Background: Chemical mapping of a 307-nucleotide RNA with 2A3 and DMS. The 2A3 profile rests on 5,502 reads. It was measured as part of the RMDB library POS240.
RNA sequence: GGGAACGACUCGAGUAGAGUCGAAAAGAUGAACGUGAGUUCAUCAAGAUCAGCUUCGGCUGAUCAAGGUAACGGUGACGUUACCACUACUCGUUCGCGAGUAGACUUAUAACGUGAGUUAUAAGACACGCAUCUUCGGAUGCGUGAAGGCAUCUCGUACGCGAGAUGCCAGAGCGGAUCUUCGGAUCCGCUCAAUAGUGUCUUGGAGCGCGCGGAGUAAACAUAUAUGGUUCAUAUAUGUCCGUAGGCACGUAAAAAAAGCGAGUAAGAGCCGAUUCGUCGGCUCUAAAAGAAACAACAACAACAAC
Reactivity to 2A3 in 0.01 (KOAc 150mM, MgCl2 10mM, bicine 150mM(pH8.5), 24C), signal-to-noise 3, nucleotides 027 to 266: g010a000u010g000a000a000c010g100u130g120a140g030u050u000c010a000u000c000a000a000g000a010u000c000a000g000c000u060u150c260g170g000c010u010g000a000u000c000a010a120g000g000u000a000a000c000g000g040u060g090a020c020g010u000u000a000c010c010a000c000u000a000c000u000c030g040u060u080c280g040c000g130a000g000u000a000g010a010c000u010u010a000u000a010a000c000g010u010g020a020g000u000u000a010u000a010a000g030a020c020a000c010g010c000a000u000c000u040u050c240g140g000a000u000g000c000g000u000g020a030a020g000g000c000a000u000c000u000c000g030u030a010c300g000c000g130a000g000a000u000g000c000c000a000g000a000g000c010g000g010a010u000c010u090u100c200g080g000a000u000c000c000g000c000u000c000a000a000u000a000g000u000g000u000c020u040u170g300g120a130g030c020g000c000g000c000g010g020a030g060u190a100a150a020c020a000u030a000u000a010u000g280g200u300u300c030a000u000a000u000a000u010g040u030c020c000g010u010a020g000g000c000a000c000g000u080a020a080a000a040a000a230a060g070c030g090a020g150u190a130
Reactivity to DMS in 0.01 (KOAc 150mM, MgCl2 10mM, bicine 150mM(pH8.5), 24C), signal-to-noise 2, nucleotides 027 to 266: g010a010u000g000a010a010c020g000u040g020a230g010u000u000c010a000u010c000a130a130g000a000u010c000a020g010c010u000u000c170g030g000c000u020g000a020u010c000a050a090g000g000u000a010a000c010g010g020u020g000a160c000g020u010u000a000c000c010a300c030u010a000c010u000c000g000u000u050c230g050c020g010a010g010u000a000g020a210c010u010u000a020u000a000a000c020g020u000g010a050g010u000u000a020u000a010a000g040a300c020a000c000g000c000a020u000c000u000u020c200g030g020a010u030g010c030g030u010g010a090a080g000g010c000a000u000c000u000c010g020u000a060c210g010c030g010a000g000a010u000g000c000c000a000g000a010g010c010g040g000a020u010c000u000u070c220g000g000a000u000c000c000g020c010u010c000a000a020u000a060g010u000g000u000c000u020u010g010g020a080g000c030g000c000g000c000g010g000a300g010u030a110a130a150c010a010u000a000u000a010u010g010g010u030u020c020a020u000a010u010a000u000g000u010c010c020g000u000a020g010g010c000a020c000g000u030a000a000a120a100a030a040a130g010c020g010a060g000u000a180
Values cover nucleotides 27 to 266. The reactions ran in a buffer of 150 mM KOAc, 10 mM MgCl2 and 150 mM bicine (pH 8.5), at 24 C. High 2A3 reactivity points to a flexible backbone, as in loops and unpaired stretches.